[RMDB]
RNA sequence: GGGAACGACUCGAGUAGAGUCGAAAAAUCAAUAUUAAAGCCAUAUUCAAACAAUUUACCAUAAGGUUCAAUGUAAGCAGCGCCGGUGACUUGCAUUCCAGCUGAAUUAGAGCGACGUGCAGCAUAACAGCCGUAACCUAUUCGUAGGUUACGGCUGAAAAGAAACAACAACAACAAC
Reactivity to 2A3 in 0.01 (KOAc 150mM, MgCl2 10mM, bicine 150mM(pH8.5), 24C), signal-to-noise 2, nucleotides 027 to 126: a000u110c140a060a000u110a060u220u250a160a070a010g050c000c020a000u060a030u110u250c210a090a090a090c140a130a240u060u110u190a210c060c070a080u100a090a060g040g000u020u070c000a000a100u000g030u020a090a020g080c020a010g030c020g020c060c010g010g000u020g000a070c040u000u020g000c000a070u040u030c040c000a040g000c000u000g110a240a150u070u060a170g020a000g100c000g050a060c010g000u050g050c010a060g030c000a000u000a260a000
Reactivity to DMS in 0.01 (KOAc 150mM, MgCl2 10mM, bicine 150mM(pH8.5), 24C), signal-to-noise 1, nucleotides 027 to 126: a030u000c020a030a100u010a010u000u070a040a110a080g000c080c020a080u050a230u020u020c130a070a110a140c010a040a010u010u000u030a170c090c080a030u080a000a130g150g000u000u000c080a010a080u060g010u010a120a050g020c010a010g030c050g000c040c000g050g000u030g000a080c030u010u030g000c010a030u000u020c080c010a020g080c000u000g010a060a030u000u050a070g030a070g040c070g000a070c100g090u000g000c050a040g020c010a040u000a130a070